RNA sequence: GGGAACGACUCGAGUAGAGUCGAAAAACGUGGCAGGACUACGGUCCUGCCACGACUCGUGUUACGUAUACUGAAGGUAUACCGGAUAGGAUACACUCAGGAUACAUUCAGUAUACGUUUACGAGAAAAGUGUAUUAGCAUUCGUGCUAAUACACUUAAAAGAAACAACAACAACAAC
Reactivity to 2A3 in 0.01 (KOAc 150mM, MgCl2 10mM, bicine 150mM(pH8.5), 24C), signal-to-noise 4, nucleotides 027 to 126: a000c020g000u010g000g000c010a000g000g000a010c050u090a160c300g100g000u000c000c000u000g000c000c000a000c000g000a000c000u000c000g000u070g120u130u040a000c000g000u000a000u000a000c000u000g000a010a000g050g020u010a000u050a300c010c000g040g030a090u170a250g120g010a110u150a300c130a080c110u090c020a040g000g000a000u000a000c000a020u000u000c000a000g000u000a000u000a000c000g000u000u000u000a000c000g000a000g010a030a150
Reactivity to DMS in 0.01 (KOAc 150mM, MgCl2 10mM, bicine 150mM(pH8.5), 24C), signal-to-noise 2, nucleotides 027 to 126: a160c000g140u000g020g030c000a060g070g050a090c000u000a110c200g040g000u000c000c010u000g040c000c000a000c000g040a090c010u000c000g000u000g000u000u010a000c000g000u000a000u000a000c000u010g000a000a010g000g020u000a000u010a100c000c010g000g000a080u030a120g000g010a200u020a150c190a100c180u000c020a090g000g020a060u010a000c010a040u000u000c000a020g010u000a000u010a000c000g020u000u000u000a000c000g010a030g010a070a100

The data come from the RNA Mapping Database (RMDB), libraries RFM100 and RFMREP. An RNA of 177 nucleotides, treated with 2A3 and DMS and read out base by base. DMS adducts were read by reverse transcription with MarathonRT.